Chemical mapping of a 207-nucleotide RNA with 2A3 and DMS. It was measured as part of the RMDB library M2RFPK. Reactivities are given for positions 27 through 156. Reactivities are rounded to 0.1 and cut off at 0 and 3. For DMS, 5,469 sequencing reads were counted. The RNA was probed in 150 mM KOAc, 10 mM MgCl2 and 150 mM bicine (pH 8.5) at 24 C.
RNA sequence: GGGAACGACUCGAGUAGAGUCGAAAACAGAACUGGAUGGGCCGUGUGCUUAACCAGUACAAGAUCUCCUUCUCUCCAACGUUGUUGCCAACUCAUGAUUCUCCUAACCUGUGCUUGGAGAGACGUGCUACCAUAUAGGUGUUCGCACCUAUAUGAACAUAAUAAAAUCGUUCGCGAUUUUAUUAUGAAAAGAAACAACAACAACAAC
Reactivity to 2A3 in 0.01 (KOAc 150mM, MgCl2 10mM, bicine 150mM(pH8.5), 24C), signal-to-noise 3, nucleotides 027 to 156: c050a010g080a030a010c000u020g040g050a110u000g090g030g020c070c080g190u200g070u210g120c020u020u010a110a040c010c000a020g010u060a050c040a030a120g030a210u020c020u040c020c000u090u010c010u010c010u020c020c010a080a050c110g030u030u010g030u010u020g000c040c030a080a020c100u090c080a060u050g030a270u150u050c080u060c040c030u060a080a150c020c070u130g050u130g150c040u040u030g000g000a020g000a000g000a010c010g010u050g040c020u070a160c050c030a010u020a010u000a030g000g010u000g040u060u070c210g000c080a010c010c000u030a010u000a000u010g010a010a020
Reactivity to DMS in 0.01 (KOAc 150mM, MgCl2 10mM, bicine 150mM(pH8.5), 24C), signal-to-noise 2, nucleotides 027 to 156: c070a130g000a080a070c030u010g000g010a170u000g010g010g000c020c040g030u000g030u010g060c020u010u000a060a120c080c090a020g030u010a050c060a050a080g000a090u010c020u000c010c040u000u000c020u000c010u000c010c020a070a120c150g020u010u000g000u000u000g000c000c040a090a130c050u020c020a050u010g000a150u000u000c000u010c020c000u000a060a060c040c100u010g030u010g030c090u010u000g040g000a060g020a020g030a060c080g030u000g010c100u000a160c100c000a020u000a000u000a030g010g030u000g020u010u000c300g000c010a010c000c000u010a010u000a010u000g010a080a230